[RMDB]
RNA sequence: GGGAACGACUCGAGUAGAGUCGAAAACAUGAUGCUGAAUGACAGAAUUCAGAACUUGAAUUCUCUUCAACACGUUCUGAGGAAGGCAGAGGAGUAUCUGACCACAGUGGCACCAGAAACGCCAUUCAGAGUCCAAAAUAUUCGUAUUUUGGACUCUAAAAGAAACAACAACAACAAC
Reactivity to 2A3 in 0.01 (KOAc 150mM, MgCl2 10mM, bicine 150mM(pH8.5), 24C), signal-to-noise 3, nucleotides 027 to 126: c030a050u160g030a040u070g050c020u000g030a070a080u070g050a080c030a090g050a040a030u030u000c010a020g060a140a070c030u050u030g020a020a020u170u000c070u010c000u130u040c030a070a040c060a010c070g030u050u000c030u030g030a060g050g030a080a050g040g000c010a000g000a030g080g030a040g020u060a040u000c010u010g110a110c000c020a050c030a070g050u030g010g000c020a030c040c010a020g120a040a070a010c060g000c010c000a010u090u060c030
Reactivity to DMS in 0.01 (KOAc 150mM, MgCl2 10mM, bicine 150mM(pH8.5), 24C), signal-to-noise 4, nucleotides 027 to 126: c070a070u000g020a080u000g010c040u000g000a060a070u010g030a110c230a060g020a110a090u010u010c010a010g010a100a070c160u000u010g000a020a030u010u010c070u000c110u000u010c020a040a030c200a050c090g000u000u000c030u000g000a060g000g020a160a100g000g000c010a000g000a130g000g000a060g000u000a020u010c020u000g000a160c040c040a090c150a070g000u010g010g010c020a060c060c050a180g000a080a100a120c180g000c010c030a060u010u000c200
The record gives the reactivity of an RNA of 177 nucleotides to 2A3 and DMS. The reactions ran in a buffer of 150 mM KOAc, 10 mM MgCl2 and 150 mM bicine (pH 8.5), at 24 C.